Notes:
Conditions: 150 mM KOAc, 10 mM MgCl2 and 150 mM bicine (pH 8.5), 24 C. Structure probing data (DMS and 2A3) for a 177-nucleotide construct. It was measured as part of the RMDB library OK2TRN. High 2A3 reactivity points to a flexible backbone, as in loops and unpaired stretches.
RNA sequence: GGGAACGACUCGAGUAGAGUCGAAAAGCGUGUUGCUGCCGUGCUUAGCCAGCUGGCAUAGGGGGCUGCCGCGGCGGCCAUCGCCGUCGCCGCCGGACCUUGCCAGGCGGUGUCGGCCAGCGCUGCGCCCUCCUCUGCAUUUCGAUGCAGAGGAGGGAAAAGAAACAACAACAACAAC
Reactivity to DMS in 0.01 (KOAc 150mM, MgCl2 10mM, bicine 150mM(pH8.5), 24C), signal-to-noise 3, nucleotides 027 to 126: g010c010g030u000g000u000u010g020c050u000g020c010c020g010u000g010c110u000u000a170g040c010c010a080g010c020u010g010g010c130a070u010a070g030g000g000g010g000c070u000g000c280c090g010c040g000g000c010g000g010c040c140a060u020c170g010c010c030g000u000c080g030c020c060g000c010c000g030g020a110c090c100u010u020g020c030c010a110g020g010c010g010g010u000g010u010c020g010g010c020c180a060g000c020g010c000u000g000c130g010
Reactivity to 2A3 in 0.01 (KOAc 150mM, MgCl2 10mM, bicine 150mM(pH8.5), 24C), signal-to-noise 2, nucleotides 027 to 126: g030c030g000u080g040u180u170g000c020u030g000c000c020g000u040g020c060u110u140a020g010c020c030a050g010c050u070g110g040c080a060u300a100g070g000g000g030g010c030u030g050c020c020g000c010g000g000c040g020g030c040c030a100u110c070g020c030c010g000u000c010g000c000c000g000c000c010g040g070a090c030c040u080u050g080c040c040a070g010g050c010g000g000u030g020u030c010g000g000c010c020a010g000c000g000c020u070g000c060g030